[RMDB]
RNA sequence: GGGAACGACUCGAGUAGAGUCGAAAAAUAUGCUACGCGGCAUUAAUAUCGAUUACGCGUAUAAUAUUAAUCGUAAUCGCGAUCGGCUACGUAUACGAUGCAUAUCGAUAUAUUAGCGCUAGCCGUAAGCCCAGAUACAUUUCGAUGUAUCUGGGCUAAAAGAAACAACAACAACAAC
Reactivity to 2A3 in 0.01 (KOAc 150mM, MgCl2 10mM, bicine 150mM(pH8.5), 24C), signal-to-noise 1, nucleotides 027 to 126: a000u170a010u130g000c010u020a030c130g020c050g110g000c010a000u060u190a020a080u060a000u040c050g040a010u030u040a040c010g000c000g040u060a040u020a040a000u090a100u120u160a010a020u020c010g000u010a030a100u080c050g000c090g220a110u170c000g010g110c010u010a000c030g050u090a010u020a040c010g070a040u050g150c140a040u090a000u120c030g080a000u010a000u010a020u080u080a010g000c020g000c040u000a000g030c000c000g020u040a050
Reactivity to DMS in 0.01 (KOAc 150mM, MgCl2 10mM, bicine 150mM(pH8.5), 24C), signal-to-noise 2, nucleotides 027 to 126: a090u010a030u000g030c040u030a050c170g020c020g000g040c080a080u000u000a070a060u000a000u000c020g020a050u000u000a020c010g000c080g000u000a000u000a080a140u010a140u000u010a060a130u030c020g010u010a050a060u000c120g040c240g000a090u000c070g000g060c060u000a000c070g000u000a000u000a020c010g020a060u010g030c110a060u000a010u000c000g000a110u010a030u000a050u010u000a090g040c040g030c140u000a020g000c000c090g000u010a080

Structure probing data (2A3 and DMS) for a 177-nucleotide construct. DMS (dimethyl sulfate) methylates the pairing face of unpaired adenines and cytosines. 2A3 adducts were read by reverse transcription with SuperScript II with manganese. For DMS, 1,074 sequencing reads were counted. DMS adducts were read by reverse transcription with MarathonRT. The RNA was probed in 150 mM KOAc, 10 mM MgCl2 and 150 mM bicine (pH 8.5) at 24 C.